Chemical mapping of a 207-nucleotide RNA with 2A3 and DMS. The RNA was probed in 150 mM KOAc, 10 mM MgCl2 and 150 mM bicine (pH 8.5) at 24 C. The data come from the RNA Mapping Database (RMDB), library OK3TST. For 2A3, 1,442 sequencing reads were counted. Values cover nucleotides 27 to 156.
[RMDB]
RNA sequence: GGGAACGACUCGAGUAGAGUCGAAAAGGGAGAUUAUUCACAGUGAUCGAACAUUGCAAACAAGUGGGAACAUCAAACAGGUUGACAUGAAACAAAUGGGCCAGGGCCGUCUCCAGCCUGGCAUGAUAUUUCACCUCCACAUUGGUGCCAUCGUCCAAAGCUAUUAUGUGUUCGCACAUAAUAGCUUAAAAGAAACAACAACAACAAC
Reactivity to 2A3 in 0.01 (KOAc 150mM, MgCl2 10mM, bicine 150mM(pH8.5), 24C), signal-to-noise 3, nucleotides 027 to 156: g040g020g030a050g010a020u060u100a080u140u190c100a050c020a130g060u050g030a050u020c010g000a090a010c020a040u000u140g070c070a080a050a060c040a150a060g060u050g000g020g010a040a040c000a060u070c070a030a060a080c040a040g020g030u020u050g010a040c050a110u090g020a060a060a050c040a020a090a020u070g020g060g000c010c000a020g000g080g070c020c010g080u040c030u040c030c010a030g000c000c010u000g000g000c000a020u050g000a010u020a030u000u080u040c010a030c040c030u020c050c000a070c030a070u060u060g040g000u030g000c010c030a020u050c040g030u020c010c030a040
Reactivity to DMS in 0.01 (KOAc 150mM, MgCl2 10mM, bicine 150mM(pH8.5), 24C), signal-to-noise 2, nucleotides 027 to 156: g030g020g010a180g020a110u000u010a050u010u000c120a020c060a180g010u000g020a070u000c090g000a130a110c030a110u000u010g050c050a080a080a100c070a060a090g020u010g010g000g010a060a040c050a090u000c030a010a060a100c110a070g000g020u010u000g020a120c100a070u010g000a100a050a070c050a170a080a100u010g010g000g020c020c010a040g020g000g000c040c020g000u020c060u000c050c020a110g010c010c020u000g000g010c050a070u000g040a050u000a080u010u020u010c030a040c030c010u000c000c050a060c120a190u000u010g000g020u000g020c000c030a060u000c040g000u000c020c020a070
For DMS the reverse transcriptase was MarathonRT.